The record gives the reactivity of an RNA of 170 nucleotides to 2A3 and DMS. For DMS the reverse transcriptase was MarathonRT. The reactions ran in a buffer of 150 mM KOAc, 10 mM MgCl2 and 150 mM bicine (pH 8.5), at 24 C. For 2A3 the reverse transcriptase was SuperScript II with manganese. The data come from the RNA Mapping Database (RMDB), library 15KLIB.
RNA sequence: GGGAACGACUCGAGUAGAGUCGAAAAGAGUAGCACUCAGAGGGAGGAAUCCACACGGAGUAGAGCAGAGAAAUCACCUCCAGAGGACCCCUUCAGCGAACAGAGAGCGCUGCGAGCGAGGAGUAAGGACCGCAUCACUUCGGUGAUGCGAAAAGAAACAACAACAACAAC
Reactivity to 2A3 in 0.01 (KOAc 150mM, MgCl2 10mM, bicine 150mM(pH8.5), 24C), signal-to-noise 4, nucleotides 027 to 129: g050a010g010u110a020g020c010a040c080u010c030a020g020a030g080g000g040a070g020g010a050a050u010c020c000a060c000a010c120g020g000a020g000u140a050g030a040g070c090a010g040a020g060a080a100a010u110c040a060c000c010u030c010c010a010g020a020g030g020a030c000c000c000c000u040u050c060a020g010c010g000a020a010c060a010g100a010g010a010g030c050g000c020u030g030c030g010a040g010c030g010a000g020g000a030g030u080a060a030g040g000a000c010
Reactivity to DMS in 0.01 (KOAc 150mM, MgCl2 10mM, bicine 150mM(pH8.5), 24C), signal-to-noise 5, nucleotides 027 to 129: g050a150g040u050a090g050c060a200c040u000c060a050g020a110g000g000g000a070g040g020a060a100u040c050c020a050c110a200c110g000g030a060g050u040a070g050a050g050c190a120g040a130g010a100a120a080u000c060a100c090c010u030c000c000a100g040a170g010g010a080c000c000c000c000u000u040c000a100g020c040g010a030a050c110a100g030a120g030a070g060c040g000c070u070g010c120g010a050g010c060g000a050g050g010a050g020u020a000a070g030g030a030c090